[RMDB]
RNA sequence: GGGAACGACUCGAGUAGAGUCGAAAAUGCAACUGCUGAGGGAUCAGGAUAAUCAUCCGCAGAUAAAUAUAACUGCUAAAAAUAAUACACAAACUUACGCAAUGGCAGCCUAAACAGCACCAUGCGUGCCUGAUUUUUGCUCUCUGAUGGCAAUUUGCCUCUGAAUCAUGUUCGCAUGAUUCAGAGGAAAAGAAACAACAACAACAAC
Reactivity to 2A3 in 0.01 (KOAc 150mM, MgCl2 10mM, bicine 150mM(pH8.5), 24C), signal-to-noise 4, nucleotides 027 to 156: u100g010c040a040a000c060u050g010c010u010g020a000g010g010g010a020u000c000a010g040g060a300u050a030a030u050c020a020u020c030c020g000c000a020g000a060u190a120a240a010u260a030u070a200a070c010u020g000c000u080a020a060a000a090a010u120a050a090u140a090c060a010c020a070a180a030c060u150u090a010c010g000c050a040a200u010g000g000c020a020g010c010c000u040a070a040a020c010a020g000c000a000c010c000a000u020g000c010g010u020g000c010c020u050g050a140u060u050u090u110u110g060c010u030c000u000c010u060g110a100u090g020g000c000a020a040u050u010u180g040
Reactivity to DMS in 0.01 (KOAc 150mM, MgCl2 10mM, bicine 150mM(pH8.5), 24C), signal-to-noise 1, nucleotides 027 to 156: u020g010c030a120a210c040u030g000c010u000g000a070g050g030g020a130u000c030a000g030g000a060u000a030a010u010c070a060u000c040c060g040c000a030g000a170u000a110a090a140u010a130u000a050a180c010u000g000c000u000a010a090a010a070a110u000a050a140u010a170c060a100c060a060a140a170c100u000u000a080c040g040c040a070a080u000g070g000c020a110g030c010c000u000a100a100a130c140a060g000c010a080c010c010a040u000g000c050g030u000g010c040c080u000g000a100u000u010u050u010u000g030c040u010c080u090c130u050g020a170u000g030g000c010a030a190u020u000u010g010